[RMDB]
Overview
The record gives the reactivity of an RNA of 207 nucleotides to 2A3 and DMS. Reactivities are given for positions 27 through 156. For 2A3 the reverse transcriptase was SuperScript II with manganese. The RNA was probed in 150 mM KOAc, 10 mM MgCl2 and 150 mM bicine (pH 8.5) at 24 C. Source: RMDB library M2RFPK, as collected in RNAgym. Reactivities are rounded to 0.1 and cut off at 0 and 3. For DMS, 8,676 sequencing reads were counted.
RNA sequence: GGGAACGACUCGAGUAGAGUCGAAAAGAUUCCUCGUUGUUGAGCGAGGUUUAAACAAAUCGACCACACAAACGUAGAGCCGACUACGGAUUUAUAAAUUAAGGCAUUAAGUGUCAUAAGGAGACAAAAAACGAUGUUGUGUUCGCACAACAUCGAACAUUGUAUUACUGUUCGCAGUAAUACAAUGAAAAGAAACAACAACAACAAC
Reactivity to 2A3 in 0.01 (KOAc 150mM, MgCl2 10mM, bicine 150mM(pH8.5), 24C), signal-to-noise 9, nucleotides 027 to 156: g090a130u150u120c000c000u000c000g010u010u130g030u020u050g020a000g000c010g010a000g000g030u060u120u040a030a030a010c060a010a010a010u030c010g020a030c030c010a090c020a040c030a100a220a010c010g000u000a000g000a000g010c010c010g160a020c010u000a000c000g000g010a010u040u300u040a150u140a060a030a020u160u140a010a010g000g010c000a000u070u180a110a050g030u030g010u040c010a020u050a220a100g160g020a080g040a060c090a010a130a010a020a010a030c030g000a000u000g000u010u000g000u000g000u040u060c150g050c040a000c000a000a000c000a000u000c000g000a010a000
Reactivity to DMS in 0.01 (KOAc 150mM, MgCl2 10mM, bicine 150mM(pH8.5), 24C), signal-to-noise 5, nucleotides 027 to 156: g010a260u010u000c000c000u000c070g040u000u000g020u000u000g010a170g040c010g000a080g010g020u000u000u020a060a090a140c090a040a070a130u000c020g020a120c030c050a110c080a300c090a070a080a050c040g010u000a050g000a100g050c020c070g020a080c020u000a070c040g010g000a190u010u000u010a040u000a050a080a120u000u000a050a070g010g030c010a190u000u010a040a090g030u000g000u010c020a090u000a070a070g000g000a300g000a110c060a000a030a080a080a040a120c010g000a010u010g010u010u010g020u000g010u000u010c300g050c020a040c010a020a010c000a000u000c010g000a020a090